The record gives the reactivity of an RNA of 177 nucleotides to 2A3.
[RMDB]
RNA sequence: GGGAACGACUCGAGUAGAGUCGAAAACAUGGAUGAUAUUGUAUGUUACACUACCUUAAAUACGAGAAAUACGAGGAUUUCAUUACAGUUAUUUGAGUGUUUCGUAUUUUACUAAGUCAUACCAAUCGGCCAACUAUAGGUUCGCCUAUAGUUGGCCAAAAGAAACAACAACAACAAC
Reactivity to 2A3 in 0.01 (KOAc 150mM, MgCl2 10mM, bicine 150mM(pH8.5), 24C), signal-to-noise 2, nucleotides 027 to 126: c060a060u050g030g000a020u010g040a000u080a080u140u210g070u000a040u070g080u140u130a020c040a010c070u170a100c010c030u090u050a070a160a060u050a050c000g040a030g010a160a010a010u020a030c070g000a010g040g000a040u000u090u070c030a030u070u240a200c070a060g000u000u050a040u020u010u000g010a020g000u010g000u000u000u000c020g000u000a000u000u050u000u030a040c010u050a100a040g040u120c000a000u030a290c000c020a020a000u080c080